[RMDB]
Chemical mapping of a 177-nucleotide RNA with 2A3 and DMS. For 2A3, 5,042 sequencing reads were counted. For 2A3 the reverse transcriptase was SuperScript II with manganese. The RNA was probed in 150 mM KOAc, 10 mM MgCl2 and 150 mM bicine (pH 8.5) at 24 C.
RNA sequence: GGGAACGACUCGAGUAGAGUCGAAAAGCUGCACGAUGGGCCGACGCGUCGGCCUUGUCUGUCGACGACUGGGCCAAUGUGGCGGCCGUUUCCGUCUGCGUGCAAGUGCGAGGCAGGCGCACGGGGAUGAUAUACUGCGAUUCGUCGCAGUAUAUCAAAAAGAAACAACAACAACAAC
Reactivity to 2A3 in 0.01 (KOAc 150mM, MgCl2 10mM, bicine 150mM(pH8.5), 24C), signal-to-noise 2, nucleotides 027 to 126: g030c030u030g000c010a000c020g050a050u090g020g030g030c010c000g000a030c010g010c010g000u010c000g000g020c030c010u010u000g000u020c010u040g300u270c070g100a080c070g000a010c000u020g010g000g010c000c000a010a000u040g010u010g030g020c000g000g020c000c000g000u000u010u000c010c000g050u060c070u100g070c020g010u010g000c010a070a090g010u010g050c020g020a080g090g060c050a020g010g070c010g010c020a020c010g020g000g000g000a050
Reactivity to DMS in 0.01 (KOAc 150mM, MgCl2 10mM, bicine 150mM(pH8.5), 24C), signal-to-noise 6, nucleotides 027 to 126: g010c090u000g010c010a010c030g010a130u000g020g010g010c010c000g000a030c060g010c020g030u000c050g010g010c000c010u000u000g010u010c020u000g020u010c240g000a150c260g000a020c020u000g000g000g000c000c010a020a010u000g010u000g010g000c010g010g010c010c010g000u000u000u000c030c010g010u010c040u010g010c010g010u000g010c020a080a190g020u000g000c020g000a100g020g010c060a060g000g000c050g010c010a010c010g010g000g000g010a300
About this RNA:
Values cover nucleotides 27 to 126.